[RMDB]
RNA sequence: GGGAACGACUCGAGUAGAGUCGAAAAAUAAGUGGCAUUCUUAAUUCAUCUCAUUACUGACUAUGGUAACCUGGUGCCAACAUGCCCUAUGGUCAAAGCUCUCGCUCCAAUCUGUGGGUCUAAGCUCGCAAUAUGAAGGAUUCGUCCUUCAUAUUGCAAAAGAAACAACAACAACAAC
Reactivity to DMS in 0.01 (KOAc 150mM, MgCl2 10mM, bicine 150mM(pH8.5), 24C), signal-to-noise 5, nucleotides 027 to 126: a070u000a060a090g010u000g000g010c040a070u000u010c060u010u010a060a100u010u000c090a070u000c090u000c050a100u010u000a080c120u000g010a080c120u010a070u010g020g020u010a050a060c110c090u010g010g020u000g020c040c040a040a080c100a050u000g000c010c010c040u000a060u010g010g010u010c050a040a100a090g000c050u000c040u000c070g010c040u000c010c040a060a070u000c070u000g000u010g010g010g010u000c080u000a060a090g030c070u000c140
Reactivity to 2A3 in 0.01 (KOAc 150mM, MgCl2 10mM, bicine 150mM(pH8.5), 24C), signal-to-noise 5, nucleotides 027 to 126: a000u110a060a020g030u020g050g000c030a040u130u060c060u110u120a140a110u150u100c060a070u010c050u000c050a080u060u150a090c040u060g150a050c040u050a050u240g030g000u040a030a030c000c040u040g040g000u040g040c020c000a030a030c020a040u110g010c000c000c000u040a080u070g050g000u040c000a040a050a070g010c010u010c010u020c060g030c020u000c000c020a050a140u040c050u060g060u100g040g030g010u000c030u040a050a030g030c030u040c070